RNA sequence: GGGAACGACUCGAGUAGAGUCGAAAACAGCUGUUCCUGGCCUAGGGAGGAGCCAGAACCCCCAACCAAUAGUUUUGAGGAUGGUGAUGCGAGCCUUGGGUCCUCCCUAACGUGGCUACUGUGUUACAGAAGCAAUAUCCAAGGCAGUGUCAUCUGACAUUUAGGUGCAGUUCGCUGCACCUAAAUGAAAAGAAACAACAACAACAAC
Reactivity to 2A3 in 0.01 (KOAc 150mM, MgCl2 10mM, bicine 150mM(pH8.5), 24C), signal-to-noise 2, nucleotides 027 to 156: c060a030g050c080u170g040u110u090c010c000u010g000g010c000c010u030a080g000g000g000a000g010g010a010g000c010c010a010g020a060a070c010c020c000c000c050a030a010c040c010a050a110u070a120g020u010u020u020u040g060a030g040g050a060u050g000g030u020g010a000u010g000c000g000a050g020c000c000u000u010g010g010g000u000c000c010u010c050c030c010u020a040a020c050g050u030g100g030c010u050a090c050u070g030u030g090u230u210a050c010a000g000a020a000g000c010a020a080u010a010u120c000c000a000a010g000g000c010a010g010u000g000u000c000a010u000c000u000g030a030
Reactivity to DMS in 0.01 (KOAc 150mM, MgCl2 10mM, bicine 150mM(pH8.5), 24C), signal-to-noise 1, nucleotides 027 to 156: c110a050g020c020u000g010u000u000c080c040u000g000g010c000c010u000a190g010g010g010a060g030g010a260g030c020c030a020g020a090a080c030c000c000c040c020a110a230c070c100a080a120u000a130g010u000u000u000u020g020a100g020g010a120u000g020g000u000g000a050u020g030c020g000a140g010c020c010u000u000g000g050g030u000c040c020u000c000c000c000u020a060a040c040g020u000g010g020c000u000a080c080u000g050u010g040u000u020a130c140a050g010a100a080g020c030a050a210u010a080u020c000c020a040a030g030g020c010a140g000u000g010u000c000a000u000c020u000g010a180
Source: RMDB library OK3TST, as collected in RNAgym. An RNA of 207 nucleotides, treated with 2A3 and DMS and read out base by base. For 2A3 the reverse transcriptase was SuperScript II with manganese. 2A3 is a SHAPE reagent: it acylates the 2'-hydroxyl of flexible nucleotides of all four kinds. Values cover nucleotides 27 to 156.